An RNA of 177 nucleotides, treated with 2A3 and DMS and read out base by base. Values cover nucleotides 27 to 126. The reactions ran in a buffer of 150 mM KOAc, 10 mM MgCl2 and 150 mM bicine (pH 8.5), at 24 C.
RNA sequence: GGGAACGACUCGAGUAGAGUCGAAAAAAGCCGACCGUCUCAAAACAGGGUGAAGAGAGCAGCGGAAGAGAGAGACGCUUGGAUGGCAGCAGCAGGCCUGAGCAACAGCUGACAGCAGGCAGGGGACUCCUACUCUAGAUUUCGAUCUAGAGUAGGAAAAAGAAACAACAACAACAAC
Reactivity to 2A3 in 0.01 (KOAc 150mM, MgCl2 10mM, bicine 150mM(pH8.5), 24C), signal-to-noise 3, nucleotides 027 to 126: a030a000g050c020c010g030a060c020c010g020u000c000u010c090a080a150a070a060c060a050g070g000g020u070g050a120a050g070a010g010a010g000c010a020g010c030g040g030a100a010g040a000g010a000g000a000g020a060c030g000c040u060u080g060g030a080u030g050g000c020a020g010c010a000g000c010a020g010g050c010c000u050g020a020g010c030a010a100c020a030g030c010u040g040a030c000a020g050c000a000g050g000c020a010g010g010g010g020a020c030
Reactivity to DMS in 0.01 (KOAc 150mM, MgCl2 10mM, bicine 150mM(pH8.5), 24C), signal-to-noise 6, nucleotides 027 to 126: a080a070g010c040c030g010a090c100c010g020u000c020u010c020a100a070a110a110c140a080g020g010g010u010g010a080a060g010a080g000a070g000c060a030g000c050g010g010a080a060g000a080g000a110g010a070g000a050c080g000c100u010u000g020g000a070u010g020g010c030a060g020c040a050g010c070a060g000g010c040c020u000g010a090g000c060a080a090c110a070g010c020u000g000a090c080a040g010c040a040g010g020c030a070g000g010g020g000a100c180